Structure probing data (2A3) for a 207-nucleotide construct. Conditions: 150 mM KOAc, 10 mM MgCl2 and 150 mM bicine (pH 8.5), 24 C. Reactivities are rounded to 0.1 and cut off at 0 and 3. It was measured as part of the RMDB library M2RFPK.
[RMDB]
RNA sequence: GGGAACGACUCGAGUAGAGUCGAAAAGUUGAGAGCGUUUAACUUAAGUCUUUUUUAUUAGCUUAAAAAAACUAUAUACAAGUGGUGGUAGUCCGCCUCUCUAAGGGGACGCCUUUAGAAGAAGAGGGAAAGGCACUAAGCUUCGGCUUAGUGCCAAGACAAUGUGUACGUUCGCGUACACAUUGUCAAAAGAAACAACAACAACAAC
Reactivity to 2A3 in 0.01 (KOAc 150mM, MgCl2 10mM, bicine 150mM(pH8.5), 24C), signal-to-noise 2, nucleotides 027 to 156: g060u050u070g040a010g010a000g030c070g030u050u080u070a060a060c040u100u050a040a040g070u160c010u030u200u080u070u060u070a150u110u090a080g050c020u070u110a040a000a020a000a040a010a030c170u140a170u030a040u060a240c010a030a040g010u010g090g050u010g000g020u060a040g040u020c050c020g050c030c030u000c000u000c000u010a020a030g000g000g010g020a030c040g120c000c000u010u020u030a010g010a080a010g010a020a000g010a040g010g010g040a070a080a070g010g000c010a000c000u000a000a000g010c000u010u130c250g010g000c000u010u010a000g000u010g000c000c000a000a000